Description: An RNA of 207 nucleotides, treated with DMS and 2A3 and read out base by base. For 2A3, 19,366 sequencing reads were counted. For DMS the reverse transcriptase was MarathonRT. Source: RMDB library ARCHII, as collected in RNAgym. For DMS, 12,062 sequencing reads were counted.
RNA sequence: GGGAACGACUCGAGUAGAGUCGAAAAUCGAGCUUGAGUUGCGAGCCGGGGGGAUCGGCCCGUCAUCAACGUCAAAGCCAAUAAUAACUGGCAAACAAAACAACAAUUUAGCUUUCGCUGCCUAAUAGCAGUCUGAAUAGCUGAUCCUCCGUGCAUCCUAAUACACAAAGUUCGCUUUGUGUAUUAGAAAAGAAACAACAACAACAAC
Reactivity to DMS in 0.01 (KOAc 150mM, MgCl2 10mM, bicine 150mM(pH8.5), 24C), signal-to-noise 5, nucleotides 027 to 156: u010c040g010a130g020c020u000u000g020a230g010u000u000g010c000g000a160g050c040c040g030g000g020g030g070g010a040u010c020g050g020c010c040c070g000u000c060a100u000c060a070a100c090g000u000c040a060a060a140g030c010c020a040a110u000a090a150u000a070a070c070u000g020g000c050a080a090a300c070a050a100a070a100c060a060a050c080a080a140u000u000u000a070g020c040u000u010u000c040g010c020u010g000c000c010u010a090a160u000a110g010c020a020g010u000c070u000g020a050a060u010a060g020c010u010g000a030u000c010c000u000c030c010g030u000g000c030a270u000c030
Reactivity to 2A3 in 0.01 (KOAc 150mM, MgCl2 10mM, bicine 150mM(pH8.5), 24C), signal-to-noise 9, nucleotides 027 to 156: u110c010g010a020g040c020u050u040g040a060g090u050u030g050c020g020a020g010c010c010g040g000g000g000g020g010a010u020c010g010g010c000c030c010g080u060c040a150u060c030a060a080c050g090u070c070a070a040a020g000c010c020a030a010u200a160a020u100a080a060c090u040g020g000c000a030a110a030c050a030a070a050a020c060a030a010c020a050a050u080u150u150a080g020c000u020u040u030c020g000c010u000g000c000c020u180a140a060u120a120g000c000a000g010u030c090u090g020a050a030u060a110g000c000u000g000a010u020c000c000u000c000c020g040u080g020c000a050u050c000